The record gives the reactivity of an RNA of 177 nucleotides to DMS and 2A3.
2A3 adducts were read by reverse transcription with SuperScript II with manganese.
For 2A3, 815 sequencing reads were counted.
It was measured as part of the RMDB library OK2TRN.
RNA sequence: GGGAACGACUCGAGUAGAGUCGAAAAUUGCUUUCAGUUUGGUCUUUGACUUGCUUUUCGGAGCAUAGGGAUGAAGCCAGGUGCCUGAAGCACUUGCAGGAAAAUUUGUCUGAAAGAGUCAUGUUACCCUCUGUGGUAGGUUCGCCUACCACAGAGGAAAAGAAACAACAACAACAAC
Reactivity to DMS in 0.01 (KOAc 150mM, MgCl2 10mM, bicine 150mM(pH8.5), 24C), signal-to-noise 2, nucleotides 027 to 126: u000u000g010c030u000u000u010c030a010g010u000u000u000g000g010u010c010u000u010u000g000a140c040u010u000g010c040u000u000u000u020c200g040g000a000g010c010a030u010a030g010g020g010a120u000g000a020a020g030c040c010a000g000g010u000g010c140c010u000g010a110a200g000c020a070c090u000u010g010c120a080g010g010a040a050a050a130u010u000u000g010u010c000u000g020a050a100a070g000a070g000u000c100a110u040g010u000u000a110c080
Reactivity to 2A3 in 0.01 (KOAc 150mM, MgCl2 10mM, bicine 150mM(pH8.5), 24C), signal-to-noise 1, nucleotides 027 to 126: u060u050g020c010u070u060u090c010a010g030u050u070u050g020g040u050c020u020u010u090g050a100c000u000u030g030c000u100u080u020u090c150g130g010a010g000c010a030u180a020g120g000g050a060u110g030a040a000g000c000c000a040g000g060u030g050c030c070u040g040a080a010g000c010a030c030u030u090g000c050a100g110g000a050a050a050a080u010u060u100g050u000c010u010g000a070a030a030g040a010g030u030c010a060u190g100u160u070a190c030